The record gives the reactivity of an RNA of 177 nucleotides to 2A3 and DMS. For DMS the reverse transcriptase was MarathonRT. For DMS, 13,751 sequencing reads were counted.
RNA sequence: GGGAACGACUCGAGUAGAGUCGAAAAGAUAUGGAGAAGGCGAUAAGGUGCGGUCGGAAACGACCGGCACCUUUUGACGCCUGAACUCCUAAGUCAAAAUCUAUGCACUCUUCGGAGUGCAUAGAAACUAACAGGUAAUGUUCGCAUUACCUGUUAGAAAAGAAACAACAACAACAAC
Reactivity to 2A3 in 0.01 (KOAc 150mM, MgCl2 10mM, bicine 150mM(pH8.5), 24C), signal-to-noise 2, nucleotides 027 to 126: g010a020u070a030u100g010g010a010g010a020a020g000g000c030g060a060u070a290a040g000g000u010g020c000g000g000u000c000g030g000a080a030a050c010g000a000c010c070g010g000c000a010c000c000u010u030u000u020g010a020c000g000c000c000u000g000a000a010c000u000c000c000u020a080a010g030u000c030a020a030a030a260u030c010u000a010u000g010c000a000c000u000c010u040u100c300g130g000a010g020u000g000c000a000u000a010g000a010a000a000
Reactivity to DMS in 0.01 (KOAc 150mM, MgCl2 10mM, bicine 150mM(pH8.5), 24C), signal-to-noise 7, nucleotides 027 to 126: g000a030u000a250u010g000g010a020g020a110a010g010g010c000g020a150u010a030a020g020g020u000g020c010g000g000u000c000g010g000a080a050a150c010g020a010c000c000g020g040c000a000c000c000u000u000u000u000g020a190c030g010c000c000u000g000a100a070c000u000c000c000u000a030a110g000u000c020a100a070a110a130u000c000u000a010u000g000c000a010c000u000c000u000u010c190g030g010a010g020u000g000c000a000u000a000g000a010a050a170